[RMDB]
RNA sequence: GGGAACGACUCGAGUAGAGUCGAAAACUCCAAGAGUCGACAGUUCAUGUCCUGGAGAAAGGAGCGGUGACAGUACACUUCAGCACCGCGAGCCCACAGGCGAACUUCAUUGUAUCGCUGUGUGGUAACUGGUCGUAAGGUUCGCCUUACGACCAGUAAAAGAAACAACAACAACAAC
Reactivity to 2A3 in 0.01 (KOAc 150mM, MgCl2 10mM, bicine 150mM(pH8.5), 24C), signal-to-noise 2, nucleotides 027 to 126: c000u010c000c000a070a040g040a010g220u260c060g020a020c010a010g100u130u180c080a140u120g010u000c000c000u000g050g060a030g090a040a070a010g200g050a110g000c020g000g000u010g090a090c000a000g060u050a110c090a040c140u180u150c130a000g000c000a000c000c000g000c000g000a010g000c020c020c000a020c000a000g130g050c000g020a010a020c000u070u120c120a130u280u290g030u020a300u150c000g010c000u010g090u030g020u050g160g020u000a000
Reactivity to DMS in 0.01 (KOAc 150mM, MgCl2 10mM, bicine 150mM(pH8.5), 24C), signal-to-noise 2, nucleotides 027 to 126: c000u000c000c010a040a160g000a110g050u010c110g010a060c110a030g010u000u030c140a120u000g000u000c040c020u010g010g010a040g020a160a130a060g000g020a210g000c000g040g000u000g000a030c120a090g020u000a130c210a170c200u000u000c100a130g000c000a020c000c000g020c000g000a090g040c150c000c000a050c060a140g040g010c000g000a020a050c080u000u000c300a080u000u000g010u000a090u000c000g010c030u000g000u000g010u010g010g000u000a080

Conditions: 150 mM KOAc, 10 mM MgCl2 and 150 mM bicine (pH 8.5), 24 C. Chemical mapping of a 177-nucleotide RNA with 2A3 and DMS. It was measured as part of the RMDB library OK2TRN. DMS adducts were read by reverse transcription with MarathonRT.